[RMDB]
Overview: This 177-nucleotide RNA was probed chemically with DMS and 2A3.
RNA sequence: GGGAACGACUCGAGUAGAGUCGAAAAUUUAGCGUUGACAGUAUCGGGUAUGCUAGAUAUCAUGCGCCCCGUUCACACGAUUCCUCUGUAGUUCAGUCGGUAGAACGGCGGACUGUUAAUCCGUAUGUGUGCUGUAGGUAUUCGUACCUACAGCACAAAAAGAAACAACAACAACAAC
Reactivity to DMS in 0.01 (KOAc 150mM, MgCl2 10mM, bicine 150mM(pH8.5), 24C), signal-to-noise 3, nucleotides 027 to 126: u010u010u010a070g010c060g020u000u010g000a050c060a080g000u000a230u000c050g020g000g020u000a060u010g020c020u000a040g010a070u000a070u000c060a100u010g020c120g020c070c040c010c010g000u000u000c010a020c070a140c030g000a070u000u000c050c020u000c160u010g010u030a080g010u020u010c060a040g030u000c010g000g030u000a140g000a030a040c010g020g010c080g010g000a040c020u000g010u000u000a070a080u010c050c030g010u010a050u020g010
Reactivity to 2A3 in 0.01 (KOAc 150mM, MgCl2 10mM, bicine 150mM(pH8.5), 24C), signal-to-noise 1, nucleotides 027 to 126: u090u080u040a030g020c030g050u040u040g010a030c000a010g120u060a060u080c000g070g010g000u050a020u140g020c050u000a060g050a110u120a040u090c060a010u040g000c000g030c020c000c000c000g010u000u000c010a010c010a000c050g000a040u030u080c010c020u030c150u130g100u180a070g020u000u070c120a050g010u000c020g000g030u050a030g010a110a020c000g000g020c010g000g020a000c010u000g020u090u000a050a090u020c020c010g160u170a070u230g210
For DMS, 2,376 sequencing reads were counted.